Source: RMDB library OK1LIB, as collected in RNAgym. This 177-nucleotide RNA was probed chemically with DMS and 2A3. The 2A3 profile rests on 3,600 reads. Conditions: 150 mM KOAc, 10 mM MgCl2 and 150 mM bicine (pH 8.5), 24 C.
[RMDB]
RNA sequence: GGGAACGACUCGAGUAGAGUCGAAAAAGGCAAUUUGUUCGUUUGAUAUUUCAGCCUGGGAAUGAGUGUAUGGGGUGUUGGAAGUCGAACACAUGAGAGGCAUUUGUAUCAUUUCAGGUGGGGUGCCGAUAUUACGCCCAUUCGUGGGCGUAAUAUCAAAAGAAACAACAACAACAAC
Reactivity to DMS in 0.01 (KOAc 150mM, MgCl2 10mM, bicine 150mM(pH8.5), 24C), signal-to-noise 4, nucleotides 027 to 126: a050g000g000c040a130a080u010u000u000g000u010u000c120g010u020u030u010g000a050u010a040u010u010u000c060a120g000c030c030u000g010g000g000a090a060u000g010a060g020u000g000u010a080u030g000g010g010g010u010g000u000u010g000g000a050a060g020u020c070g000a050a050c040a040c070a080u030g000a080g010a090g020g000c020a050u000u010u020g020u030a070u020c040a050u010u010u020c120a080g020g040u010g000g010g000g020u000g010c070c040
Reactivity to 2A3 in 0.01 (KOAc 150mM, MgCl2 10mM, bicine 150mM(pH8.5), 24C), signal-to-noise 2, nucleotides 027 to 126: a000g020g020c030a030a020u020u010u040g100u060u040c080g020u000u020u040g040a030u000a110u050u070u030c020a000g000c000c000u020g010g020g010a050a030u050g000a000g040u040g000u040a050u040g000g000g000g000u020g040u050u000g020g010a020a020g030u010c020g020a020a000c020a000c000a040u050g020a030g020a040g040g030c000a010u020u030u060g030u020a060u040c010a040u040u070u080c030a000g000g000u000g000g040g000g000u010g000c000c040
High DMS reactivity at an A or C suggests that its Watson-Crick edge is free.